[RMDB]
RNA sequence: GGGAACGACUCGAGUAGAGUCGAAAAUCAGGCACUCUUUGAGUCCUUAGAGUUUACUGAAUUGUCUUUUACUAAUUACAAGCUCCAGUCUCAGAUUGUAACUGGCCUUUUUAAAGAUUGCUCUAGAUGACCCUUAAGUUCGCUUAAGGGAAAAGAAACAACAACAACAAC
Reactivity to 2A3 in 0.01 (KOAc 150mM, MgCl2 10mM, bicine 150mM(pH8.5), 24C), signal-to-noise 9, nucleotides 027 to 129: u060c010a000g010g010c050a000c010u010c020u030u090u230g040a030g040u060c010c010u030u070a060g010a030g060u040u090u130a050c010u010g030a050a050u130u050g080u090c030u010u090u050u080a110c080u110a080a180u190u080a070c050a100a020g010c010u020c020c010a050g170u050c010u000c040a100g030a260u080u090g050u040a030a020c030u010g010g030c000c000u130u110u030u020u110a050a070a000g030a020u050u070g010c020u010c010u060a070g010a140u080g100a100
Reactivity to DMS in 0.01 (KOAc 150mM, MgCl2 10mM, bicine 150mM(pH8.5), 24C), signal-to-noise 7, nucleotides 027 to 129: u050c070a070g000g000c120a040c050u020c030u000u030u060g020a060g000u030c080c040u000u020a100g030a060g000u000u000u000a060c050u030g020a000a000u070u040g050u010c030u000u000u000u000a120c150u010a070a060u060u060a080c110a080a070g000c060u030c040c020a060g000u060c060u020c030a090g030a110u000u000g050u000a000a000c000u020g020g000c110c020u030u030u030u010u040a030a030a030g030a080u000u000g030c070u020c030u040a010g020a110u000g000a190